[RMDB]
RNA sequence: GGGAACGACUCGAGUAGAGUCGAAAAGAAAGAGCAGCACACAGCGUCGAAGAUCCGGGCUGGAUUCUAGAGCACGGUCGCCCCAGCGCGGCCCGGGAAGUCAGUGGCAAGACCGCCUGAGCAGCAACAGAGUCGCCCAGGUUCGCCUGGGCGACAACCAUAACUAAACGUUCGCGUUUAGUUAUGGAAAAGAAACAACAACAACAAC
Reactivity to DMS in 0.01 (KOAc 150mM, MgCl2 10mM, bicine 150mM(pH8.5), 24C), signal-to-noise 2, nucleotides 027 to 156: g010a100a060a140g000a110g010c020a080g000c030a080c050a060c040a090g020c080g030u000c040g000a100a120g000a090u000c020c030g030g040g010c030u000g030g010a100u000u000c050u000a120g000a110g010c010a080c060g020g050u000c030g010c020c000c020c170a170g010c060g030c020g000g000c020c000c020g010g050g000a030a070g000u000c020a110g020u010g010g020c030a090a120g000a110c040c020g000c010c010u000g010a060g000c000a060g010c040a060a110c070a120g010a160g000u000c010g000c010c000c000a000g020g010u000u000c210g040c010c000u000g000g020g020c000g000a010c010a000a030
Reactivity to 2A3 in 0.01 (KOAc 150mM, MgCl2 10mM, bicine 150mM(pH8.5), 24C), signal-to-noise 3, nucleotides 027 to 156: g080a020a060a000g030a010g010c040a000g010c010a010c010a010c010a050g010c010g090u050c030g050a080a030g020a050u050c040c020g050g090g000c070u080g070g020a070u110u080c030u080a040g000a010g070c020a020c070g030g010u010c020g010c010c010c010c030a110g000c040g000c020g040g000c030c010c020g010g010g000a020a010g030u040c030a010g020u030g040g020c030a060a010g050a090c050c060g020c020c030u010g000a010g000c020a010g020c000a020a050c010a050g080a020g070u000c000g000c010c000c000a010g020g000u050u030c130g040c060c010u000g010g000g010c010g000a000c000a000a000

Conditions: 150 mM KOAc, 10 mM MgCl2 and 150 mM bicine (pH 8.5), 24 C.
The record gives the reactivity of an RNA of 207 nucleotides to DMS and 2A3.
For DMS the reverse transcriptase was MarathonRT.
High DMS reactivity at an A or C suggests that its Watson-Crick edge is free.
It was measured as part of the RMDB library M2RFPK.